[RMDB]
RNA sequence: GGGAACGACUCGAGUAGAGUCGAAAAGAACGGCAGAGAGCCGAGAAAUGAGACGAGGUAGAGUGCGCGCUCUACCAAAAGUUGUGUGUAAAAACGCACGUGUAGGCGCGGCUACACAACUCAAGAAACCCUCCUAUGAGUUCGCUCAUAGGAGGGUAAAAGAAACAACAACAACAAC
Reactivity to 2A3 in 0.01 (KOAc 150mM, MgCl2 10mM, bicine 150mM(pH8.5), 24C), signal-to-noise 3, nucleotides 027 to 126: g050a050a010c000g000g000c060a010g160a020g030a030g250c040c010g020a020g070a000a090a040u220g020a080g020a040c130g030a070g010g030u020a000g010a030g040u150g070c050g000c050g000c030u070c010u060a000c000c010a070a000a000a000g090u140u060g010u010g020u000g020u080a050a070a000a050a000c030g000c020a040c100g060u120g000u080a080g040g000c030g000c020g030g000c020u010a010c010a010c010a020a120c010u040c030a010a030g110a120a080
Reactivity to DMS in 0.01 (KOAc 150mM, MgCl2 10mM, bicine 150mM(pH8.5), 24C), signal-to-noise 4, nucleotides 027 to 126: g030a080a120c030g000g010c030a250g030a140g020a180g010c030c020g000a090g010a050a200a080u020g000a060g020a100c240g000a230g000g010u000a030g020a070g010u040g020c080g000c030g000c010u050c010u020a000c020c040a040a030a060a060g020u030u000g020u000g010u000g010u000a050a060a100a090a080c010g000c000a000c040g030u020g010u020a020g010g000c020g000c030g000g020c050u020a000c030a040c030a090a150c040u010c040a110a050g000a110a040